Notes
Structure probing data (DMS and 2A3) for a 207-nucleotide construct. For 2A3 the reverse transcriptase was SuperScript II with manganese. For DMS, 9,855 sequencing reads were counted. It was measured as part of the RMDB library OK3TST.
[RMDB]
RNA sequence: GGGAACGACUCGAGUAGAGUCGAAAACUGACCGGGUAUUGUGAACCACGUAGACACAAGAGGCGGUAAAUAUCCGCAAGUCGCGCCCCGCUUAGGGGCAUUUACAAAGGGGUGAUGAUGCAGUACAAGAUCAUGCUCACGGCAAGGAAAAUGGGCGAUUUGCUAUACAUUUCGAUGUAUAGCAAAUAAAAGAAACAACAACAACAAC
Reactivity to DMS in 0.01 (KOAc 150mM, MgCl2 10mM, bicine 150mM(pH8.5), 24C), signal-to-noise 4, nucleotides 027 to 156: c060u010g000a090c050c010g020g010g020u000a040u010u020g020u010g000a110a090c010c030a070c070g050u010a170g030a200c040a080c070a120a110g000a160g010g010c000g040g000u000a040a050a100u000a080u000c000c000g050c030a060a120g010u000c040g030c080g030c010c000c000c030g030c210u000u000a130g010g010g030g040c010a010u000u000u000a100c090a080a060a110g020g000g030g010u000g020a080u000g000a110u000g010c060a080g020u010a100c030a050a080g000a090u000c040a100u000g020c020u000c020a070c080g030g030c060a070a070g000g020a040a020a070a090u010g010g020g050c030g000
Reactivity to 2A3 in 0.01 (KOAc 150mM, MgCl2 10mM, bicine 150mM(pH8.5), 24C), signal-to-noise 4, nucleotides 027 to 156: c050u050g040a040c010c030g020g010g020u060a080u050u090g040u050g030a040a020c030c010a050c070g050u070a040g050a060c020a010c060a170a040g040a090g130g010c020g020g000u060a080a180a010u110a070u070c010c000g000c050a060a010g040u030c030g000c010g020c030c000c000c000g010c120u100u240a070g000g000g000g000c010a010u010u040u020a040c030a010a080a020g060g020g000g000u010g000a070u030g010a010u070g010c040a010g030u030a040c020a070a030g010a080u100c030a050u170g020c010u010c020a030c040g030g000c020a020a060g050g040a060a020a040a050u080g010g010g010c030g010

High DMS reactivity at an A or C suggests that its Watson-Crick edge is free.